Conditions: 150 mM KOAc, 10 mM MgCl2 and 150 mM bicine (pH 8.5), 24 C. This 177-nucleotide RNA was probed chemically with DMS and 2A3. DMS adducts were read by reverse transcription with MarathonRT. The DMS profile rests on 2,814 reads. Source: RMDB library TTRDEL, as collected in RNAgym. Reactivities are given for positions 27 through 126.
RNA sequence: GGGAACGACUCGAGUAGAGUCGAAAAGAUAUGGAUCACUCCCCACCCUAAAGACGCUUGGACCUCGGAAACGAGCUAGCGUCUCACUAGGAGGUGAUCCUAAGUCAAACACGAGUUCGCUCGUGAAGUAUAUCAACAGCUUCGGCUGUUGAUAUACAAAAGAAACAACAACAACAAC
Reactivity to DMS in 0.01 (KOAc 150mM, MgCl2 10mM, bicine 150mM(pH8.5), 24C), signal-to-noise 3, nucleotides 027 to 126: g010a060u010a130u000g000g000a000u000c010a020c020u000c140c010c000c060a300c120c010c030u000a030a100a030g010a010c000g020c000u000u000g020g010a110c300c040u000c010g000g000a060a080a100c000g000a010g000c040u010a010g020c000g020u000c010u000c050a040c120u000a040g010g020a050g030g000u010g000a030u000c000c000u000a030a100g010u000c090a130a120a190c000a000c020g000a010g000u000u010c230g010c000u000c000g010u010g000a060a100
Reactivity to 2A3 in 0.01 (KOAc 150mM, MgCl2 10mM, bicine 150mM(pH8.5), 24C), signal-to-noise 4, nucleotides 027 to 126: g030a040u210a120u220g000g010a010u000c000a010c030u130c040c000c000c020a030c020c010c000u150a260a240a010g000a000c000g030c010u070u130g100g100a280c040c020u030c030g020g020a090a070a060c000g020a000g000c000u010a000g000c010g020u000c000u020c000a060c020u020a020g000g010a010g000g020u000g000a000u010c000c000u020a130a030g120u130c120a160a060a060c010a010c030g000a010g010u100u130c260g150c110u010c000g000u000g030a020a010
Description
The 2A3 profile rests on 5,920 reads.